[RMDB]
Chemical mapping of a 177-nucleotide RNA with DMS and 2A3. Source: RMDB library OK1LIB, as collected in RNAgym. Reactivities are rounded to 0.1 and cut off at 0 and 3. For 2A3, 19,224 sequencing reads were counted.
RNA sequence: GGGAACGACUCGAGUAGAGUCGAAAAGGACUGAGACACCGCCCAGGCUGCUACGCCAGGCAGCAGCGGAGAAUAUUGCUCCAUGGGCGGCAGCCUGAUGCAGCGACAAGGUGUGCGGGAUGAAGGCAUUAUUUAUGAUUUUCGAAUCAUAAAUAAUAAAAGAAACAACAACAACAAC
Reactivity to DMS in 0.01 (KOAc 150mM, MgCl2 10mM, bicine 150mM(pH8.5), 24C), signal-to-noise 9, nucleotides 027 to 126: g000g000a090c030u000g000a110g010a080c110a160c010c010g000c030c090c000a060g010g010c000u000g000c010u010a120c120g020c050c040a080g000g010c130a020g000c010a070g010c170g000g000a080g010a130a140u050a120u030u020g010c000u000c010c000a120u020g000g010g010c000g000g000c030a010g000c000c000u000g000a080u010g010c050a060g000c040g010a070c100a000a000g000g010u010g000u010g000c040g000g000g000a070u010g010a100a070g010g010c110
Reactivity to 2A3 in 0.01 (KOAc 150mM, MgCl2 10mM, bicine 150mM(pH8.5), 24C), signal-to-noise 7, nucleotides 027 to 126: g030g000a050c030u030g020a010g010a040c010a010c010c010g000c000c000c000a010g060g010c000u000g000c010u070a050c050g060c020c010a020g020g010c030a000g000c000a010g070c050g040g030a040g020a070a040u210a080u130u210g050c000u000c010c000a050u060g030g020g010c000g000g000c000a000g000c000c000u030g000a030u060g000c020a000g010c000g040a030c010a000a010g040g000u030g010u030g020c000g010g010g000a030u060g030a030a020g040g000c020